RNA sequence: GGGAACGACUCGAGUAGAGUCGAAAACAUAGGCGAGACAGCAGAGGAGCCUUCCGCAAGGUCCCGAUAUCUUCAUCGAGUUGAGGGAGAGGUUCUGCGCCUUGGCCAUCCUGAUGGAAACCGGGACACUCUCACAUCGAUUCGUCGAUGUGAGAGUAAAAGAAACAACAACAACAAC
Reactivity to 2A3 in 0.01 (KOAc 150mM, MgCl2 10mM, bicine 150mM(pH8.5), 24C), signal-to-noise 2, nucleotides 027 to 126: c020a020u260a060g020g000c010g010a030g020a070c060a050g070c060a030g050a030g080g060a030g040c020c000u030u010c020c000g130c100a060a050g090g000u010c020c010c000g030a030u060a070u080c050u070u010c020a050u010c040g130a040g100u060u130g140a060g010g010g000a060g000a000g040g030u100u070c060u180g060c040g000c040c000u050u060g170g010c000c000a030u000c000c020u020g030a010u030g010g060a060a010a030c050c040g000g010g010a000c020
Reactivity to DMS in 0.01 (KOAc 150mM, MgCl2 10mM, bicine 150mM(pH8.5), 24C), signal-to-noise 2, nucleotides 027 to 126: c160a080u010a060g000g000c020g000a240g030a060c050a080g030c080a040g010a120g000g010a280g030c050c000u000u000c030c040g020c200a070a160g030g000u000c000c010c020g000a040u010a100u010c050u010u010c060a030u000c010g000a110g020u010u010g000a080g010g010g010a300g000a020g020g020u000u010c190u010g000c100g000c000c020u000u010g010g040c010c020a040u010c020c020u000g010a040u000g010g000a000a080a060c070c000g010g000g000a030c080
Structure probing data (2A3 and DMS) for a 177-nucleotide construct. The reactions ran in a buffer of 150 mM KOAc, 10 mM MgCl2 and 150 mM bicine (pH 8.5), at 24 C. The data come from the RNA Mapping Database (RMDB), library OK2TST. 2A3 adducts were read by reverse transcription with SuperScript II with manganese. For DMS the reverse transcriptase was MarathonRT.